An RNA of 207 nucleotides, treated with 2A3 and DMS and read out base by base.
For DMS, 2,555 sequencing reads were counted.
The reactions ran in a buffer of 150 mM KOAc, 10 mM MgCl2 and 150 mM bicine (pH 8.5), at 24 C.
For DMS the reverse transcriptase was MarathonRT.
[RMDB]
RNA sequence: GGGAACGACUCGAGUAGAGUCGAAAAGCUCCUUCAGGUGAACGAUCUCGGUUGUUUCUCGGAAGGCAUGAUCACCCCGUCCGAUGCGGAAGUUCGUGCUUCCGUCGAACGCGAAAGUCGGACGGCGAAAACGAGUUACCGUUCGCGGUAACUCGAAGCAACUGUAAAUGUUCGCAUUUACAGUUGCAAAAGAAACAACAACAACAAC
Reactivity to 2A3 in 0.01 (KOAc 150mM, MgCl2 10mM, bicine 150mM(pH8.5), 24C), signal-to-noise 4, nucleotides 027 to 156: g050c030u030c040c000u040u120c060a060g040g030u050g060a070a030c040g030a070u030c040u050c170g080g000u010u010g010u010u030u000c040u030c040g020g040a050a020g050g020c100a100u090g030a030u120c010a050c000c030c000c000g000u000c000c000g000a010u030g030c000g000g030a010a000g010u120u300c180g110u300g070c010u020u000c010c000g000u000c020g020a190a080c100g000c040g140a090a030a000g030u010c000g000g000a000c010g000g000c020g040a050a030a000a010c000g010a000g000u000u000a000c000c010g010u060u050c230g000c000g110g000u000a000a000c000u000c000g000a000a030
Reactivity to DMS in 0.01 (KOAc 150mM, MgCl2 10mM, bicine 150mM(pH8.5), 24C), signal-to-noise 1, nucleotides 027 to 156: g020c060u000c000c000u000u020c050a110g000g030u010g000a040a020c040g040a040u000c010u000c070g030g010u000u000g000u000u000u000c020u000c020g000g000a080a050g050g040c010a050u010g000a110u000c000a130c000c030c040c020g030u010c000c020g020a050u000g000c060g020g000a040a060g000u000u000c210g010u030g000c020u000u000c020c010g000u000c060g000a040a090c110g000c000g010a120a060a180g060u010c030g010g010a040c000g000g020c050g000a060a060a090a200c050g020a060g020u000u000a010c000c000g030u000u000c300g060c040g050g030u000a000a010c000u000c000g000a000a150